Description: The record gives the reactivity of an RNA of 177 nucleotides to DMS.
RNA sequence: GGGAACGACUCGAGUAGAGUCGAAAACUCAAGGAAUACGAACCAGAAAUGGCCAAGGUCAUCCGAUCCGGACACCACGGAAUUCAGAUGGUUCGCGCUAAGGAACUCGUGCCAGGAGAUCUUGUCAUGAGGUAAUGCCAUUCGUGGCAUUACCUCAAAAAGAAACAACAACAACAAC
Reactivity to DMS in 0.01 (KOAc 150mM, MgCl2 10mM, bicine 150mM(pH8.5), 24C), signal-to-noise 1, nucleotides 027 to 126: c010u000c030a170a140g010g000a080a090u020a080c010g000a030a030c010c010a010g000a050a060a100u000g030g000c000c080a250a170g010g010u010c030a080u000c000c000g050a150u010c010c090g000g000a040c280a080c290c070a040c150g020g010a080a090u000u000c020a060g000a060u000g000g000u000u000c050g000c160g000c090u030a050a070g040g000a070a090c110u000c030g000u000g020c000c040a060g040g010a030g000a120u000c070u000u000g000u010c080a070
Conditions: 150 mM KOAc, 10 mM MgCl2 and 150 mM bicine (pH 8.5), 24 C.